[RMDB]
Structure probing data (2A3 and DMS) for a 207-nucleotide construct. 2A3 adducts were read by reverse transcription with SuperScript II with manganese. The reactions ran in a buffer of 150 mM KOAc, 10 mM MgCl2 and 150 mM bicine (pH 8.5), at 24 C. For DMS the reverse transcriptase was MarathonRT. The DMS profile rests on 15,126 reads. High 2A3 reactivity points to a flexible backbone, as in loops and unpaired stretches. For 2A3, 4,464 sequencing reads were counted.
RNA sequence: GGGAACGACUCGAGUAGAGUCGAAAAGCGUGACCCAUGGAAGUGUGUGGGGAGGAGAACUUAGGCGCCUUUUGCGCAGGAAUAUCCGUGUUGCUCUUAGGAAAUGCGUUUUCUACUGUCUCACGUGGGAGGAAGUCGACAGAUCCUUGCGGCUCGCGAUCACAAUUGGGUUCGCCCAAUUGUGGUCAAAAGAAACAACAACAACAAC
Reactivity to 2A3 in 0.01 (KOAc 150mM, MgCl2 10mM, bicine 150mM(pH8.5), 24C), signal-to-noise 3, nucleotides 027 to 156: g050c020g020u030g020a080c000c010c010a020u050g050g030a050a050g030u030g010u000g010u040g050g010g000g000a010g020g010a030g000a010a020c060u080u070a070g020g030c000g040c000c000u020u040u110u160g000c010g000c010a010g010g060a090a070u080a060u120c050c010g030u020g020u050u080g020c030u000c020u100u070a010g000g080a030a060a050u100g040c040g040u030u060u000u000c010u020a070c020u040g050u040c010u020c050a050c050g030u060g010g020g000a020g010g010a040a010g020u020c000g000a040c000a010g040a040u010c020c020u030u040g020c020g020g000c010u020c000g010c040
Reactivity to DMS in 0.01 (KOAc 150mM, MgCl2 10mM, bicine 150mM(pH8.5), 24C), signal-to-noise 4, nucleotides 027 to 156: g010c050g000u000g000a290c010c000c020a160u010g020g020a060a070g000u000g040u010g020u020g020g000g010g010a100g010g000a090g010a060a060c070u000u000a100g010g010c030g020c020c120u000u010u010u010g020c030g030c020a100g020g000a080a090u000a120u010c030c020g020u000g020u000u000g000c000u000c080u000u010a090g020g010a020a070a120u000g010c080g040u010u000u000u000c010u000a080c050u010g020u000c040u000c060a060c090g020u000g010g000g020a080g000g010a050a060g000u010c050g000a160c020a050g010a190u000c040c010u000u000g030c030g010g010c020u000c020g010c300